[RMDB]
RNA sequence: GGGAACGACUCGAGUAGAGUCGAAAAGAUAUGGAUCAAUGAACUACUUGAUGAAGGAGCAAUGAUGGCUUAGCGUCGGAAACGACGCUAAGCUUGAGCUCCCUGCAUCAAGCAUUGAUCCUAAGUCCUUAAAUGUAAUCUUCGGAUUACAUUUAAGAAAAGAAACAACAACAACAAC
Reactivity to DMS in 0.01 (KOAc 150mM, MgCl2 10mM, bicine 150mM(pH8.5), 24C), signal-to-noise 6, nucleotides 027 to 126: g010a120u010a230u010g010g010a010u010c010a000a000u000g000a090a070c120u010a300c000u000u000g010a010u010g020a280a110g010g000a030g020c010a290a150u020g010a130u010g010g000c000u000u000a010g000c000g030u000c000g010g000a080a090a240c000g000a020c000g010c000u000a000a000g000c000u000u000g000a100g010c020u000c020c000c030u000g010c010a010u000c000a010a000g010c000a010u000u000g010a010u000c000c000u000a020a120g000u010c040
Reactivity to 2A3 in 0.01 (KOAc 150mM, MgCl2 10mM, bicine 150mM(pH8.5), 24C), signal-to-noise 3, nucleotides 027 to 126: g050a030u120a040u270g000g000a010u000c010a010a000u010g010a070a140c110u250a030c000u300u000g000a000u000g000a010a030g000g000a010g000c010a120a300u180g030a020u080g060g000c010u030u010a010g010c000g020u000c010g000g070a170a070a060c020g000a010c020g010c010u000a000a000g000c010u000u000g000a010g010c000u030c010c020c010u130g080c000a010u010c000a000a000g010c000a000u000u000g000a000u020c000c000u000a020a010g010u000c000

An RNA of 177 nucleotides, treated with DMS and 2A3 and read out base by base.
The RNA was probed in 150 mM KOAc, 10 mM MgCl2 and 150 mM bicine (pH 8.5) at 24 C.
For DMS, 9,295 sequencing reads were counted.